[RMDB]
Chemical mapping of a 177-nucleotide RNA with DMS and 2A3. The data come from the RNA Mapping Database (RMDB), library OK2TRN. DMS adducts were read by reverse transcription with MarathonRT. For DMS, 13,922 sequencing reads were counted.

RNA sequence: GGGAACGACUCGAGUAGAGUCGAAAACUCAACACAACCAUCUGCCUGGCUAAUGGGAUGGUCAUCAAGAAGAAUGUUGGGAACAACAGCGGGCAGCCUAGCACUGUUGUCGAUAACACACUCGUGCAGAUCGAUAAUGAUUCGUCAUUAUCGAUCUAAAAGAAACAACAACAACAAC
Reactivity to DMS in 0.01 (KOAc 150mM, MgCl2 10mM, bicine 150mM(pH8.5), 24C), signal-to-noise 9, nucleotides 027 to 126: c010u000c030a100a080c150a070c130a110a070c020c020a040u000c010u010g010c030c030u000g010g020c080u010a090a100u000g010g010g000a050u000g010g010u000c080a100u020c130a100a080g010a100a080g000a130a090u000g010u010u000g000g010g000a140a040c020a020a020c020a030g020c050g010g010g010c040a060g010c070c100u000a080g010c020a050c020u000g000u000u000g000u000c030g010a140u010a030a050c070a030c100a100c080u000c050g010u000g020c180
Reactivity to 2A3 in 0.01 (KOAc 150mM, MgCl2 10mM, bicine 150mM(pH8.5), 24C), signal-to-noise 8, nucleotides 027 to 126: c010u010c020a030a040c070a010c020a060a050c010c010a030u010c030u150g150c020c010u110g150g070c070u180a180a100u160g020g000g050a020u020g000g040u010c010a090u090c020a030a160g070a060a010g050a090a070u070g020u020u020g020g030g040a030a020c020a000a000c000a010g020c050g010g150g000c020a020g060c010c060u070a030g000c020a010c030u020g020u060u010g020u020c020g020a030u050a120a010c040a000c000a010c040u050c040g060u080g040c040